[RMDB]
RNA sequence: GGGAACGACUCGAGUAGAGUCGAAAACAACUGAUUCUUUGUAGUAGUUACGGAACUGACGCUCCAGCACACCGUAAAUGAGGCGAACUUUUUGCUUUUCACGCAACUGCACACAAUAGUCAGACAGACGCGGCUUACGCGCACCGUGCUGGCCAGGAGCUAGUUCAAUUUUACACUUGGUAUCUAUCGCGCGAACGCCAGACUUAAGGAAUAAUUCUGUGCCCUCACGACGGCUCAGCUAGAGCUUAGGACACAAAUAACAAAAGAGUCUGAACUUCGGUUCAGACAAAAGAAACAACAACAACAAC
Reactivity to 2A3 in 0.01 (KOAc 150mM, MgCl2 10mM, bicine 150mM(pH8.5), 24C), signal-to-noise 5, nucleotides 027 to 266: c020a000a060c050u050g040a260u120u020c040u040u070u060g040u030a100g000u020a000g010u010u070a080c050g010g040a070a020c010u020g070a060c070g010c040u020c010c010a000g020c020a040c000a010c040c030g040u040a040a090a090u130g030a030g020g030c050g060a100a120c060u140u130u020u070u150g050c040u120u140u130u160c080a050c080g020c020a040a050c040u060g020c030a020c000a010c000a140a150u040a060g050u090c010a020g040a110c020a010g070a060c020g040c050g050g000c030u110u120a030c030g010c000g010c020a020c030c030g020u030g020c030u010g020g030c010c010a090g040g010a040g030c030u030a010g020u020u080c030a020a060u100u100u090u210a060c080a020c060u050u050g040g030u040a060u060c040u050a110u140c070g000c000g000c010g040a030a020c050g010c010c010a010g040a060c030u100u080a060a030g050g040a080a100u130a170a070u160u040c020u040g030u040g010c000c000c000u030c030a070c050g130a010c010g030g020c010u030c080a040g060c060u100a040g010a000g000c000u040u050a020g020g030a000c020a000c020a040a130a040u210a080a020c020a030a060a100a000g300a020
Reactivity to DMS in 0.01 (KOAc 150mM, MgCl2 10mM, bicine 150mM(pH8.5), 24C), signal-to-noise 3, nucleotides 027 to 266: c060a120a130c110u000g010a100u000u000c030u010u000u010g000u000a070g020u000a060g000u000u030a040c090g000g010a100a060c040u000g000a090c110g000c030u000c040c020a070g030c070a100c130a290c100c020g000u010a050a100a160u020g010a050g000g000c120g010a070a140c180u000u000u000u010u000g020c050u000u010u010u000c110a100c120g000c060a040a060c180u020g010c070a080c130a090c160a060a050u010a040g000u010c030a070g000a170c110a070g000a140c120g010c100g020g000c110u000u010a120c020g010c030g020c060a080c090c070g020u020g000c000u000g000g000c140c060a070g020g020a060g010c070u000a040g000u000u000c070a060a060u010u020u020u000a050c100a060c080u000u010g000g020u000a040u010c040u010a050u020c120g010c030g010c020g000a060a090c140g020c020c040a090g000a070c070u000u000a030a090g000g010a090a060u010a030a090u010u000c060u000g010u000g000c040c000c020u000c110a080c210g000a070c140g000g010c060u000c030a110g040c160u000a060g010a020g010c030u000u010a050g010g010a100c050a040c050a010a070a090u010a030a030c060a010a030a100a200g010a120